[RMDB]
RNA sequence: GGGAACGACUCGAGUAGAGUCGAAAAACUAUCCGUAUCCGGCUGGCGGUUGCCAUUUUGUCAAUUGCUCCCAUGUGGAUUUUGCCGCCAAACACGUGGGCUGUCGCCUGCUGCUCCUGCCUGCUAACGCCGUAUAGUGCUUCGGCACUAUACGGCGAAAAGAAACAACAACAACAAC
Reactivity to 2A3 in 0.01 (KOAc 150mM, MgCl2 10mM, bicine 150mM(pH8.5), 24C), signal-to-noise 2, nucleotides 027 to 126: a000c090u080a140u000c000c040g040u070a040u130c080c020g000g000c050u050g000g030c030g000g070u020u120g030c040c040a110u060u120u190u210g200u030c010a070a020u140u230g080c040u090c070c000c000a130u040g030u090g030g060a140u050u020u010u210g000c000c000g000c070c000a010a250a000c020a010c040g050u110g000g020g010c010u100g100u010c020g000c050c000u010g000c040u010g020c000u000c000c000u070g010c010c000u030g000c000u040a020a000

Conditions: 150 mM KOAc, 10 mM MgCl2 and 150 mM bicine (pH 8.5), 24 C.
Chemical mapping of a 177-nucleotide RNA with 2A3.